RNA sequence: GGGAACGACUCGAGUAGAGUCGAAAAAAUGGCCAAUGCAUUAAUACAGUGGGGUCUUUCCAGUGCCAGUGCAAUGAAGGCUAUGAGGUGGCUCCAGAUGGGAGGACCUGUGUGGGUAAGUACAGGAAAGAAUCAACUUAUUCGUAAGUUGAUUCUUAAAAGAAACAACAACAACAAC
Reactivity to 2A3 in 0.01 (KOAc 150mM, MgCl2 10mM, bicine 150mM(pH8.5), 24C), signal-to-noise 4, nucleotides 027 to 126: a000a000u090g020g000c050c010a060a050u080g010c020a050u030u120a100a070u180a140c050a040g090u050g070g030g020g010u040c000u050u050u010c030c010a040g040u020g040c010c030a030g030u020g060c020a010a060u150g060a130a030g050g000c010u030a050u110g060a050g020g070u070g010g020c010u020c020c010a060g070a180u090g070g000g010a030g010g030a030c020c000u010g020u020g020u050g040g030g030u040a050a060g020u030a030c030a040g020g000a060
Reactivity to DMS in 0.01 (KOAc 150mM, MgCl2 10mM, bicine 150mM(pH8.5), 24C), signal-to-noise 9, nucleotides 027 to 126: a100a040u000g010g010c020c020a090a100u000g010c020a040u000u000a090a090u010a090c100a060g020u000g010g010g010g010u000c070u000u000u000c010c010a070g010u000g020c050c080a080g020u010g010c070a050a080u010g010a140a090g010g010c020u000a060u000g000a110g000g020u000g000g000c020u000c030c040a110g000a120u010g010g000g010a060g000g010a070c030c020u000g010u010g020u000g010g000g010u000a040a070g000u000a040c070a070g000g010a150